Chemical mapping of a 177-nucleotide RNA with DMS. It was measured as part of the RMDB library TTRINS.
RNA sequence: GGGAACGACUCGAGUAGAGUCGAAAAGAUAUGGAUCAUCACACCCAUUGAAAUCCUUCGAUAAGUUGCAGUCGGAAACGACUGUCAACUUUUGACGAAGAACUGAUGGGUGUGAUGAUCCUAAGUCGAUAUAAUGAGACUUCGGUCUCAUUAUAUCAAAAGAAACAACAACAACAAC
Reactivity to DMS in 0.01 (KOAc 150mM, MgCl2 10mM, bicine 150mM(pH8.5), 24C), signal-to-noise 5, nucleotides 027 to 126: g000a090u020a300u000g010g010a000u010c000a010u000c000a000c000a010c000c000c010a010u000u010g000a140a170a150u010c050c000u000u000c000g020a210u000a010a010g010u000u000g000c000a020g010u010c000g010g000a130a090a220c000g010a010c000u000g000u010c020a010a010c000u000u000u020u010g010a260c230g000a020a010g010a030a050c140u010g010a010u000g020g010g020u000g010u000g000a000u000g000a000u000c000c000u000a010a060g010u000c110
For DMS the reverse transcriptase was MarathonRT.